About this RNA: The data come from the RNA Mapping Database (RMDB), library OK2TRN. This 177-nucleotide RNA was probed chemically with 2A3 and DMS. The RNA was probed in 150 mM KOAc, 10 mM MgCl2 and 150 mM bicine (pH 8.5) at 24 C. Reactivities are given for positions 27 through 126. The DMS profile rests on 3,179 reads. 2A3 adducts were read by reverse transcription with SuperScript II with manganese.

RNA sequence: GGGAACGACUCGAGUAGAGUCGAAAAUGUUGAACUCAACAAGCCAUCAACUGGACAAAUGGGCCUCCUUAAUCAUCUAGUGAAACAAUUCUGCCAACGAGCAUAACAGAACUUGUUAGCUUUUGACCUCUAUGCACAUUUUCGAAUGUGCAUAGAGAAAAGAAACAACAACAACAAC
Reactivity to 2A3 in 0.01 (KOAc 150mM, MgCl2 10mM, bicine 150mM(pH8.5), 24C), signal-to-noise 3, nucleotides 027 to 126: u100g000u040u040g040a120a070c040u000c150a010a040c010a020a070g040c020c000a040u040c020a040a110c060u070g020g010a010c020a030a110a120u080g030g050g030c040c010u040c010c010u080u140a090a070u050c050a000u000c050u070a020g030u010g150a040a000a030c000a040a100u090u000c010u010g020c020c000a050a070c080g050a040g040c050a050u010a070a000c000a010g040a100a040c060u060u040g020u050u040a040g020c020u090u070u000u080g070a040c000
Reactivity to DMS in 0.01 (KOAc 150mM, MgCl2 10mM, bicine 150mM(pH8.5), 24C), signal-to-noise 5, nucleotides 027 to 126: u000g000u020u010g000a170a130c110u010c040a070a090c080a090a130g010c030c040a070u000c060a100a080c120u000g010g020a070c050a060a040a110u000g010g010g020c030c040u010c020c050u010u000a050a080u010c060a060u010c060u010a070g020u000g000a070a060a030c070a040a070u010u010c020u000g000c020c050a070a120c170g010a060g030c050a050u010a070a150c020a030g000a100a070c200u000u000g010u000u000a160g030c020u000u000u000u000g000a170c170